[RMDB]
RNA sequence: GGGAACGACUCGAGUAGAGUCGAAAACGCUACUCCUUCGGGAGUAGCGAAAAGGACCUUUAGCUCAGUUGGUUAGAGCAGACGGCUCAUAACCGUCCGGCCGUAGGUUCGAGUCCUACAAGGUCCACCAAAACUUUCAGUCCUUCGGGACUGAAAGGGUAUCAAUGUUCUUCGGAACAUUGAUACCAAAAGAAACAACAACAACAAC
Reactivity to DMS in 0.01 (KOAc 150mM, MgCl2 10mM, bicine 150mM(pH8.5), 24C), signal-to-noise 3, nucleotides 027 to 156: c010g030c000u000a030c000u000c000c000u000u000c290g060g030g030a050g030u000a000g010c000g020a020a000a090a120g020g010a010c010c000u000u010u000a070g010c020u010c030a130g000u000u000g020g010u010u010a050g000a070g040c000a300g000a010c030g010g000c010u000c300a150u000a080a020c010c000g000u000c000c060g010g010c040c000g010u000a000g010g010u000u000c050g000a300g000u000c010c010u010a000c000a080a070g000g020u000c000c000a070c020c030a020a070a090a300c010u000u000u010c010a030g000u000c000c000u000u000c180g060g000g020a010c000u000g000a010a000a000g010
Reactivity to 2A3 in 0.01 (KOAc 150mM, MgCl2 10mM, bicine 150mM(pH8.5), 24C), signal-to-noise 7, nucleotides 027 to 156: c000g000c000u000a000c000u010c010c010u030u120c230g070g000g000a000g020u000a000g000c000g000a010a000a000a000g000g000a000c000c000u000u010u010a010g000c010u010c020a060g010u200u130g190g120u190u140a000g000a000g010c000a000g000a000c000g000g000c010u020c100a160u220a240a050c010c000g000u010c000c030g040g020c080c000g000u000a000g000g000u000u000c000g000a000g000u010c000c000u000a000c000a000a000g000g000u050c000c000a000c000c000a010a050a000a020c000u000u000u000c000a000g000u000c000c000u040u180c210g110g000g000a000c000u000g000a000a000a000g000
Source: RMDB library PDB130, as collected in RNAgym. The record gives the reactivity of an RNA of 207 nucleotides to DMS and 2A3. In probing experiments dimethyl sulfate is read out at A N1 and C N3, which are open when not base-paired. Values cover nucleotides 27 to 156. For DMS, 3,721 sequencing reads were counted. For 2A3, 11,101 sequencing reads were counted.